[RMDB]
RNA sequence: GGGAACGACUCGAGUAGAGUCGAAAAACAACAUGCCCAGGUAGCCCAGACCUUCAAGGCUACGGUGGGUUGCGACGCACGGUCUGAUUCUUCACAACGACGUUCACCGCGUCUUCUUCCAUCCCCCUCCAGCGCACGAAGUUCGCUUCGUGCGCAAGCAUACCGUGAAGUUCGCUUCACGGUAUGCAAAAGAAACAACAACAACAAC
Reactivity to 2A3 in 0.01 (KOAc 150mM, MgCl2 10mM, bicine 150mM(pH8.5), 24C), signal-to-noise 1, nucleotides 027 to 156: a000c040a000a000c020a080u150g000c020c010c000a020g030g020u000a000g000c000c050c110a210g090a280c060c080u160u160c190a100a040g000g020c000u020a000c010g030g160u030g000g000g050u030u050g020c080g020a010c030g040c000a040c120g000g000u040c050u050g000a100u170u040c000u120u100c120a050c040a240a120c150g070a020c040g070u090u140c030a030c080c010g000c020g000u040c010u050u030c030u120u000c030c030a160u090c030c000c050c020c010u020c000c010a000g000c020g010c000a000c000g040a000a000g010u020u000c030g030c100u000u000c000g000u000g010c010g010c010a000a000
An RNA of 207 nucleotides, treated with 2A3 and read out base by base. For 2A3 the reverse transcriptase was SuperScript II with manganese. The RNA was probed in 150 mM KOAc, 10 mM MgCl2 and 150 mM bicine (pH 8.5) at 24 C. Values cover nucleotides 27 to 156.